[RMDB]
This 177-nucleotide RNA was probed chemically with DMS and 2A3. Reactivities are given for positions 27 through 126. Source: RMDB library M2PK50, as collected in RNAgym. DMS (dimethyl sulfate) methylates the pairing face of unpaired adenines and cytosines.
RNA sequence: GGGAACGACUCGAGUAGAGUCGAAAAUCAUCCAAGUUCGCUUGGAUGAAACGGUUCUGAAGCUAAAAACGAUCCGAGGCAACAGUACCAUAAAAGGAUCGACAGCCUGCAAAUUCGUUUGCAGGAACGGAUCGUACUUUUUCGAAAGUACGAUCCGAAAAGAAACAACAACAACAAC
Reactivity to DMS in 0.01 (KOAc 150mM, MgCl2 10mM, bicine 150mM(pH8.5), 24C), signal-to-noise 1, nucleotides 027 to 126: u000c000a000u000c000c000a000a000g010u000u000c160g010c000u000u000g000g020a010u000g000a000a020a120c200g050g000u000u000c000u020g000a140a300g010c030u000a110a060a020a020a040c040g030a010u000c010c000g020a090g000g010c010a010a190c080a010g000u000a030c030c060a140u020a010a040a090a050g020g010a010u000c000g000a220c160a110g000c000c000u000g000c010a010a010a010u000u000c180g010u000u010u000g030c000a020g000g020a070a170
Reactivity to 2A3 in 0.01 (KOAc 150mM, MgCl2 10mM, bicine 150mM(pH8.5), 24C), signal-to-noise 2, nucleotides 027 to 126: u010c000a000u010c000c000a000a000g020u050u080c130g020c120u000u000g000g000a000u000g020a010a000a020c030g030g030u050u000c050u050g100a070a040g010c050u100a120a010a080a060a150c000g030a020u000c000c000g040a060g070g070c010a070a040c010a070g040u070a050c000c010a000u110a020a090a000a030g000g000a000u000c000g020a030c000a010g100c010c000u010g000c010a000a000a110u090u080c170g100u060u020u010g000c010a000g010g000a010a020